[RMDB]
RNA sequence: GGGAACGACUCGAGUAGAGUCGAAAAGAGCUGAAGUACAGCAAGAACGACGCGAUCCUUGGCAAAGCGUCGAAGAUAAGCGUGCCGAAUGCCAAGGAUUAACGGCACGCGAGGCGAAGACGCCAGAGAUCAUGAGUCCGUUCGCGGACUCAUGAUCAAAAGAAACAACAACAACAAC
Reactivity to 2A3 in 0.01 (KOAc 150mM, MgCl2 10mM, bicine 150mM(pH8.5), 24C), signal-to-noise 2, nucleotides 027 to 126: g060a050g010c010u040g030a090a000g150u230a220c010a020g000c050a010a030g130a090a010c010g000a000c000g030c000g010a080u010c000c020u040u010g000g010c020a140a060a080g010c010g000u010c010g050a030a020g020a040u210a140a030g000c000g000u000g000c000c000g020a070a040u040g000c010c010a040a000g010g000a000u000u030a070a040c000g000g000c000a010c000g000c000g000a040g000g030c000g060a110a080g120a080c040g020c000c000a050g000a010
Reactivity to DMS in 0.01 (KOAc 150mM, MgCl2 10mM, bicine 150mM(pH8.5), 24C), signal-to-noise 1, nucleotides 027 to 126: g000a030g000c020u010g010a220a210g050u060a130c040a030g060c060a120a120g000a190a220c000g000a000c020g000c000g000a050u000c000c000u000u000g000g060c010a100a020a280g000c040g030u000c000g020a030a100g000a080u070a020a100g000c040g000u000g000c020c000g000a110a050u000g000c050c020a070a220g150g040a050u000u090a100a130c000g000g010c020a010c010g000c000g020a070g000g000c000g020a300a090g000a220c070g030c000c000a100g010a160